[RMDB]
RNA sequence: GGGAACGACUCGAGUAGAGUCGAAAAUGGCUGCCGAGGGUGCCUGGACCCGAGGUGGCGAGAUCUUCCCAGGACCGGCUCUGAGUAUCCCGUCCGUGGGAGCCUCAGGGACGUAGCAAAUCGCGGACUACGCACGUAGGGUCGAAGAGCGGACGGCGAAAGAAAAACUGUUCGCAGUUUUUCUUUCAAAAGAAACAACAACAACAAC
Reactivity to 2A3 in 0.01 (KOAc 150mM, MgCl2 10mM, bicine 150mM(pH8.5), 24C), signal-to-noise 1, nucleotides 027 to 156: u100g090g000c010u010g000c010c000g000a050g010g000g000u030g000c000c020u020g000g030a010c000c000c000g010a020g000g010u000g000g000c030g010a040g010a010u090c080u170u070c030c000c000a000g030g020a010c000c060g020g020c000u000c000u000g000a000g010u030a020u020c000c010c000g030u010c020c010g000u090g000g000g000a010g010c000c000u010c000a000g000g020g020a010c000g040u060a050g050c050a040a030a010u070c040g040c010g040g000a010c020u030a040c070g060c030a050c070g050u070a100g050g020g070u050c020g030a080a080g040a040g030c020g000g030a040c010g050g020c050
Reactivity to DMS in 0.01 (KOAc 150mM, MgCl2 10mM, bicine 150mM(pH8.5), 24C), signal-to-noise 1, nucleotides 027 to 156: u020g000g000c000u010g040c000c040g010a300g020g050g040u000g000c070c070u020g000g030a210c020c010c000g020a280g010g000u010g000g000c040g000a050g010a050u000c050u010u010c010c010c010a290g000g010a070c210c000g050g030c020u000c010u000g000a050g020u020a030u010c020c000c000g000u000c070c050g000u020g000g010g000a040g010c050c010u030c010a010g000g010g020a020c030g000u010a090g010c050a070a130a100u010c060g090c040g000g010a120c060u010a060c010g020c050a090c110g020u000a130g020g010g020u000c000g000a120a110g010a110g010c000g010g010a100c070g010g040c080